[RMDB]
RNA sequence: GGGAACGACUCGAGUAGAGUCGAAAAGACACUUCGGUGUCGCCGAAUCCUAAGUCGUCCUCGUUUGACGGUAAGUGUAGCUCGGUUUCGGAAACGAAACACGAGCGCAGAUACUUACCCGAGAGGACGAUAUGGAAUUUACUAGGUUCGCCUAGAAGAAUUGUCAGCGUUUCGACGCUGACAAUUCAAAAGAAACAACAACAACAAC
Reactivity to 2A3 in 0.01 (KOAc 150mM, MgCl2 10mM, bicine 150mM(pH8.5), 24C), signal-to-noise 1, nucleotides 027 to 156: g000a000c000a000c000u000u060c290g200g020u000g000u030c010g010c000c010g140a050a190u180c010c000u030a160a040g010u010c000g000u020c020c000u010c020g150u160u170u230g040a020c000g010g000u000a000a000g010u020g090u100a050g020c000u000c000g020g000u010u000u000c010g000g050a100a120a070c020g010a000a000a000c250a170c180g010a000g000c000g000c010a000g000a090u060a040c000u000u000a000c000c000c000g090a080g000a000g050g000a000c000g000a000u000a010u030g000g000a020a010u170u060u100a090c020u010a020g000g090u010u100c150g050c090c010u090a010g050a150a020